[RMDB]
RNA sequence: GGGAACGACUCGAGUAGAGUCGAAAAUUUCUUGUAUCGAUCAGAAAAUCAAGGCUAGGCGGUUCGCUUGGAUUUAUAUUAUAAAGUUCUACAAGAAGCUCAAUUCGUAUACCUAGCUGUAUAUAGAAACAAGCCUUAUGUUCGCAUAAGGCUUGUUAAAAGAAACAACAACAACAAC
Reactivity to DMS in 0.01 (KOAc 150mM, MgCl2 10mM, bicine 150mM(pH8.5), 24C), signal-to-noise 3, nucleotides 027 to 126: u020u010u020c000u000u010g000u020a030u040c130g000a020u020c030a100g010a130a060a070a000u000c100a100a110g000g000c020u010a040g000g020c040g020g020u020u020c140g000c040u020u040g020g000a060u010u010u000a080u020a070u090u000a120u050a070a150a090g020u000u010c030u030a020c010a000a000g010a030a030g000c010u000c060a040a080u020u000c060g020u000a030u000a110c010c020u030a050g000c080u030g010u000a000u020a050u000a060g010a060
Reactivity to 2A3 in 0.01 (KOAc 150mM, MgCl2 10mM, bicine 150mM(pH8.5), 24C), signal-to-noise 3, nucleotides 027 to 126: u030u030u000c010u010u020g000u030a090u100c060g060a020u050c030a030g140a080a190a000a000u050c030a070a000g080g010c000u010a010g100g010c050g180g150u180u140c090g020c000u020u000g010g000a010u000u000u070a130u040a060u140u070a040u060a180a070a030g020u010u000c030u010a040c010a040a020g020a030a000g010c010u000c110a030a120u140u030c010g000u040a020u000a040c010c030u030a080g000c110u000g000u020a080u000a020u000a060g110a010
Structure probing data (DMS and 2A3) for a 177-nucleotide construct. The 2A3 profile rests on 1,480 reads. The data come from the RNA Mapping Database (RMDB), library OK1LIB.